This 177-nucleotide RNA was probed chemically with DMS. The reactions ran in a buffer of 150 mM KOAc, 10 mM MgCl2 and 150 mM bicine (pH 8.5), at 24 C. For DMS, 1,142 sequencing reads were counted. It was measured as part of the RMDB library OK2TST.
RNA sequence: GGGAACGACUCGAGUAGAGUCGAAAAUUCUGCACCCGACAGUUGCAGGGUAGGGAACAAAAUAAGGGGAAAUUUUGCUGGUCUGUUUACGCUUGGCAUCGAGUUUGCUGACCAGCUGAUAUGCCCGGCUAGACAAAAACUUCGGUUUUUGUCUAGCAAAAGAAACAACAACAACAAC
Reactivity to DMS in 0.01 (KOAc 150mM, MgCl2 10mM, bicine 150mM(pH8.5), 24C), signal-to-noise 1, nucleotides 027 to 126: u000u000c020u000g020c050a080c090c030c040g030a130c170a090g010u000u020g020c050a030g000g010g030u020a070g010g000g000a150a140c140a050a060a090a050u010a080a060g000g010g000g000a110a010a060u000u000u010u010g000c000u000g000g000u000c000u000g000u000u010u010a050c100g000c010u010u000g030g020c230a110u020c070g000a050g010u000u010u010g010c000u010g010a030c000c000a000g020c000u000g010a000u000a030u000g010c000c030c000g020